Record summary:
This 207-nucleotide RNA was probed chemically with DMS. The RNA was probed in 150 mM KOAc, 10 mM MgCl2 and 150 mM bicine (pH 8.5) at 24 C. Reactivities are given for positions 27 through 156. In probing experiments dimethyl sulfate is read out at A N1 and C N3, which are open when not base-paired. Reactivities are rounded to 0.1 and cut off at 0 and 3.

RNA sequence: GGGAACGACUCGAGUAGAGUCGAAAAACCGGCGGUAAAUCAACUCAGUUGAAAGCCGCGAGCGCUUUGGGUGCGAACUCAAAGGACAGCAGAUCCGGUGUAAUUCCGGGGCCGACAGUUAGAGUCCAAAAGAGGUUAUCGUUCGCGAUAACCUCAAUCAAUUAUCCAUGUUCGCAUGGAUAAUUGAAAAAGAAACAACAACAACAAC
Reactivity to DMS in 0.01 (KOAc 150mM, MgCl2 10mM, bicine 150mM(pH8.5), 24C), signal-to-noise 1, nucleotides 027 to 156: a060c030c040g030g010c000g030g000u000a000a170a210u000c010a040a090c010u000c060a190g000u000u000g010a110a170a300g040c000c020g010c030g000a140g000c040g000c000u000u000u020g000g020g010u010g000c300g010a160a010c000u000c020a020a040a020g020g000a090c030a220g030c060a090g000a160u000c020c000g050g070u000g000u000a130a300u010u000c000c000g000g070g040g050c040c000g050a070c000a100g000u000u010a200g010a160g010u010c000c010a010a030a080a180g000a010g000g020u010u000a030u000c000g010u000u010c300g000c020g030a020u000a000a020c020c000u000c010a000a010